[RMDB]
RNA sequence: GGGAACGACUCGAGUAGAGUCGAAAAGGGAUUUGUCCCUGGCCUGUUGAAACUGUUCUUGAACAGUUUCCUGAUAUAAGGAUUGCCCACAUGGCACUCAGCGUUGAAGAAAAAGCUCAGAUCGUAACACUUAGUACGUGUUCGCACGUACUAAGUGAAAAGAAACAACAACAACAAC
Reactivity to DMS in 0.01 (KOAc 150mM, MgCl2 10mM, bicine 150mM(pH8.5), 24C), signal-to-noise 4, nucleotides 027 to 126: g010g010g010a070u010u010u020g010u000c000c000c000u000g010g010c010c000u000g020u000u000g000a020a010a010c010u000g000u000u000c100u020u000g020a020a020c000a000g000u000u000u000c000c140u000g010a130u000a090u010a110a110g000g000a070u000u000g010c020c010c120a150c200a110u010g000g010c030a050c090u000c040a080g020c120g000u010u000g010a110a110g000a040a070a060a080a100g000c040u000c090a050g010a110u000c100g000u010a120a180
Reactivity to 2A3 in 0.01 (KOAc 150mM, MgCl2 10mM, bicine 150mM(pH8.5), 24C), signal-to-noise 2, nucleotides 027 to 126: g080g000g000a000u100u120u300g150u120c000c010c000u020g040g060c020c010u100g080u120u170g020a010a000a000c000u000g000u050u010c050u210u240g100a000a000c000a000g020u000u000u000c030c010u070g050a050u030a010u010a260a010g060g000a030u010u110g080c020c000c000a170c040a130u160g050g000c000a010c030u010c040a040g000c080g130u180u160g010a090a170g010a060a090a020a030a030g000c010u000c060a030g010a210u110c040g060u050a050a030
Conditions: 150 mM KOAc, 10 mM MgCl2 and 150 mM bicine (pH 8.5), 24 C. The record gives the reactivity of an RNA of 177 nucleotides to DMS and 2A3. The 2A3 profile rests on 1,237 reads.